[RMDB]
RNA sequence: GGGAACGACUCGAGUAGAGUCGAAAAUGCGGCCCCUAGGCUUCCUCCUUUGGAUCCUAGUUAUUUUGGGCCUGGUCUUAUACACAACGGUAGUCCAGUGGUAAUUUCAGUAUAAGAAGGAAAUCACCAUGUUUUGGUGUUUCGACACCAAAACAUGAAAAGAAACAACAACAACAAC
Reactivity to 2A3 in 0.01 (KOAc 150mM, MgCl2 10mM, bicine 150mM(pH8.5), 24C), signal-to-noise 5, nucleotides 027 to 126: u200g000c030g000g010c000c000c000c000u000a000g000g020c050u060u020c020c010u070c030c130u170u180u170g000g000a010u000c010c000u000a010g010u030u060a250u040u160u060u050g010g000g000c010c000u010g000g010u000c000u000u030a020u020a010c050a010c020a190a090c140g140g040u050a040g090u050c010c010a030g010u020g030g020u060a080a050u000u040u030c030a020g010u020a010u020a070a020g020a020a010g040g010a000a000a010u060c010a020c000
Reactivity to DMS in 0.01 (KOAc 150mM, MgCl2 10mM, bicine 150mM(pH8.5), 24C), signal-to-noise 4, nucleotides 027 to 126: u040g000c150g010g030c000c010c000c010u010a010g010g020c170u000u000c000c000u030c300c210u020u020u010g010g000a030u010c010c010u000a010g010u000u030a090u010u010u020u020g000g000g000c000c030u000g000g000u010c010u010u000a020u000a020c010a030c030a070a220c150g000g000u030a070g020u010c040c040a110g000u010g010g010u010a040a090u000u010u000c010a030g020u010a020u010a040a010g010a040a050g000g000a020a010a030u000c030a000c040